[RMDB]
RNA sequence: GGGAACGACUCGAGUAGAGUCGAAAAGCCACACCAGAACCGGGCUACCCAGUUGAUGGCUCUUCUAGGCGAGUCUGCAUUGCAUGGCCAAAAUUUUUACAAGAAGGUGAGUGGCAUGGUCAUCAAGUAUGUCUCUCGGAUUCGUCCGAGAGACAUAAAAAGAAACAACAACAACAAC
Reactivity to DMS in 0.01 (KOAc 150mM, MgCl2 10mM, bicine 150mM(pH8.5), 24C), signal-to-noise 2, nucleotides 027 to 126: g030c040c000a070c010a120c050c000a160g030a120a070c140c110g000g010g000c040u020a120c010c010c000a040g040u010u000g000a070u000g010g000c040u020c020u010u020c140u010a140g000g030c050g000a050g000u020c010u010g000c070a050u000u000g000c150a080u000g000g000c000c040a010a060a080a050u000u010u040u020u040a000c290a090a090g000a090a110g010g000u000g020a070g020u000g000g010c080a120u010g000g000u010c010a070u000c030a060a050g020
Reactivity to 2A3 in 0.01 (KOAc 150mM, MgCl2 10mM, bicine 150mM(pH8.5), 24C), signal-to-noise 2, nucleotides 027 to 126: g070c000c000a110c000a020c030c040a040g070a060a050c110c090g060g020g000c010u060a110c000c000c000a010g050u000u070g070a150u140g030g000c000u000c000u080u080c050u060a090g000g230c000g020a020g040u030c000u020g000c090a140u090u110g030c000a010u010g000g000c000c000a000a150a060a100u060u080u070u110u120a080c090a090a030g120a070a100g040g000u080g010a110g060u110g050g000c010a020u020g020g000u030c030a040u010c020a050a030g080
Description
Structure probing data (DMS and 2A3) for a 177-nucleotide construct. Conditions: 150 mM KOAc, 10 mM MgCl2 and 150 mM bicine (pH 8.5), 24 C. Source: RMDB library OK1LIB, as collected in RNAgym.